This 177-nucleotide RNA was probed chemically with DMS and 2A3. For DMS the reverse transcriptase was MarathonRT. The data come from the RNA Mapping Database (RMDB), libraries RFM100 and RFMREP. Reactivities are rounded to 0.1 and cut off at 0 and 3. The RNA was probed in 150 mM KOAc, 10 mM MgCl2 and 150 mM bicine (pH 8.5) at 24 C.
RNA sequence: GGGAACGACUCGAGUAGAGUCGAAAAAGCAUCAGGCUACGGCCUGAUGCAAAAAGGAGAAUUUACAAACAUUUUGUUCCUUGCAGUACACCUUUCAAAAGACAUCUUCAUCAAAUAGGUAAGACAAUGCAUUACAAUUCUUCGGAAUUGUAAUGCAAAAAGAAACAACAACAACAAC
Reactivity to DMS in 0.01 (KOAc 150mM, MgCl2 10mM, bicine 150mM(pH8.5), 24C), signal-to-noise 2, nucleotides 027 to 126: a160g000c000a030u000c010a000g000g000c000u000a080c230g020g000c020c000u010g010a020u000g050c010a000a010a070a050a030g030g000a130g010a050a050u040u020u010a110c190a100a070a130c260a040u030u000u000u000g010u000u010c000c000u000u010g020c090a050g030u000a050c040a050c060c020u000u020u030c070a020a020a060a040g000a100c050a060u020c070u000u000c090a110u020c020a090a090a080u000a040g010g020u000a030a050g050a040c220a080a110
Reactivity to 2A3 in 0.01 (KOAc 150mM, MgCl2 10mM, bicine 150mM(pH8.5), 24C), signal-to-noise 4, nucleotides 027 to 126: a000g000c000a010u000c000a000g000g010c000u050a040c250g010g010c010c010u000g010a000u000g000c000a010a010a010a010a010g140g010a030g020a120a060u030u070u130a110c110a070a140a040c050a090u100u080u030u080g080u030u000c000c000u010u060g070c040a020g020u090a050c050a110c070c020u060u150u090c080a070a100a120a110g030a070c010a100u000c060u080u040c020a070u060c060a020a110a150u130a160g060g050u110a060a000g050a030c020a120a100